RNA sequence: GGGAACGACUCGAGUAGAGUCGAAAAGAUAUGGAGCACUUGGACCCUUGAACUACACUGAUCGGAAACGAUGAGUGCAAGGCUAGUGCUCCUAAGUCAAACCUCGGAGUCUUCGGACUCCGAGGAAGUUAUCCCGUAUCUUCGGAUACGGGAUAACAAAAGAAACAACAACAACAAC
Reactivity to DMS in 0.01 (KOAc 150mM, MgCl2 10mM, bicine 150mM(pH8.5), 24C), signal-to-noise 1, nucleotides 027 to 126: g010a060u000a300u030g020g000a030g020c000a000c020u000u000g050g000a110c170c020c100u000u020g010a090a020c060u020a260c010a020c010u000g000a020u000c010g010g000a130a080a060c000g000a000u010g000a010g010u000g010c000a000a000g030g000c030u000a020g020u000g000c000u000c010c010u020a000a070g000u000c040a130a100a210c010c000u010c010g000g020a030g000u000c000u000u020c190g020g000a020c000u000c000c000g000a000g000g000a000a030
Reactivity to 2A3 in 0.01 (KOAc 150mM, MgCl2 10mM, bicine 150mM(pH8.5), 24C), signal-to-noise 2, nucleotides 027 to 126: g000a000u100a030u230g020g000a010g000c010a020c060u080u170g120g120a250c080c000c000u010u000g010a050a030c050u180a020c160a000c030u040g120a020u010c010g000g080a080a000a060c010g010a010u060g130a020g020u010g000c010a030a000g030g000c010u020a000g000u010g000c000u000c000c000u000a010a020g030u000c030a060a060a100c000c010u020c020g020g000a000g000u000c000u160u240c300g080g000a000c000u000c000c010g000a000g000g000a000a000
Overview:
An RNA of 177 nucleotides, treated with DMS and 2A3 and read out base by base. The DMS profile rests on 1,072 reads. For 2A3 the reverse transcriptase was SuperScript II with manganese. Reactivities are given for positions 27 through 126. The 2A3 profile rests on 2,727 reads.